An RNA of 177 nucleotides, treated with DMS and 2A3 and read out base by base. The reactions ran in a buffer of 150 mM KOAc, 10 mM MgCl2 and 150 mM bicine (pH 8.5), at 24 C. Source: RMDB library OK2TST, as collected in RNAgym.
RNA sequence: GGGAACGACUCGAGUAGAGUCGAAAAAUGUUAAUAAGCAUGCCUUUCAUACACCAGCUUUUGACAGACGUGCCUUUGGUAAGUUGCAACCACUUCCAUUCUUCUUUUUUGACGAUGGAGAAUGUGAUACAAUGUGUAAUUUCGAUUACACAUUGUAAAAAGAAACAACAACAACAAC
Reactivity to DMS in 0.01 (KOAc 150mM, MgCl2 10mM, bicine 150mM(pH8.5), 24C), signal-to-noise 9, nucleotides 027 to 126: a060u000g010u000u000a060a080u010a080a090g020c020a050u000g010c040c030u000u010u010c090a090u010a100c110a100c100c070a060g000c050u000u000u000u000g010a050c070a050g010a070c090g020u010g000c020c020u000u000u000g010g010u000a030a060g010u000u000g000c110a060a080c030c040a070c220u000u000c030c000a020u000u000c010u000u000c010u010u000u000u000u010u000g010a110c300g010a030u000g000g000a010g000a020a020u000g010u010g010a140
Reactivity to 2A3 in 0.01 (KOAc 150mM, MgCl2 10mM, bicine 150mM(pH8.5), 24C), signal-to-noise 7, nucleotides 027 to 126: a010u070g010u070u040a110a060u130a200a040g020c030a030u040g030c000c010u050u120u110c080a080u070a080c040a050c070c020a030g040c040u070u050u050u060g040a030c010a020g040a030c030g060u050g020c010c010u080u070u070g030g000u060a070a090g020u040u060g020c020a040a020c010c010a060c040u060u000c010c000a010u000u000c010u020u010c000u000u150u070u010u080u270g160a110c110g030a030u070g000g020a010g010a020a010u010g000u010g020a020